[RMDB]
RNA sequence: GGGAACGACUCGAGUAGAGUCGAAAAUCUUCCCAGUCUCGGUUCCUGUUCUGGGAGCUUGGGGCUGAGUAGCCACCAGCCCUGCUCUCUGCAGUGUUCUAUUGUGGAUUGCUUGUGUGCUGGCAGGUCGUUUAUUCAAGUUCGCUUGAAUAAACGAAAAAGAAACAACAACAACAAC
Reactivity to 2A3 in 0.01 (KOAc 150mM, MgCl2 10mM, bicine 150mM(pH8.5), 24C), signal-to-noise 7, nucleotides 027 to 126: u030c020u060u070c000c000c000a010g010u000c000u010c020g030g000u000u020c000c000u100g150u300u250c100u300g000g000g000a000g000c010u150u300g010g000g000g000c000u010g000a000g020u050a020g020c010c010a010c000c000a000g000c000c000c000u000g000c000u000c000u000c000u010g010c000a010g000u010g120u290u090c130u170a040u020u040g000u020g020g000a020u010u010g000c040u180u090g060u030g050u090g120c010u000g030g000c030a070g010g050
Reactivity to DMS in 0.01 (KOAc 150mM, MgCl2 10mM, bicine 150mM(pH8.5), 24C), signal-to-noise 7, nucleotides 027 to 126: u040c120u000u000c020c020c000a020g000u000c000u000c010g000g010u000u010c010c000u000g010u020u020c220u050g010g000g000a010g000c000u010u030g040g010g010g010c000u000g000a110g010u010a090g010c030c020a300c010c010a010g010c000c010c000u000g000c010u000c020u000c000u010g010c010a020g000u000g010u040u040c190u040a020u000u000g020u010g010g000a020u000u000g000c010u020u000g010u020g020u030g020c010u000g000g000c080a080g010g010
Structure probing data (2A3 and DMS) for a 177-nucleotide construct. The RNA was probed in 150 mM KOAc, 10 mM MgCl2 and 150 mM bicine (pH 8.5) at 24 C. For 2A3 the reverse transcriptase was SuperScript II with manganese. It was measured as part of the RMDB libraries RFM100 and RFMREP. Reactivities are rounded to 0.1 and cut off at 0 and 3.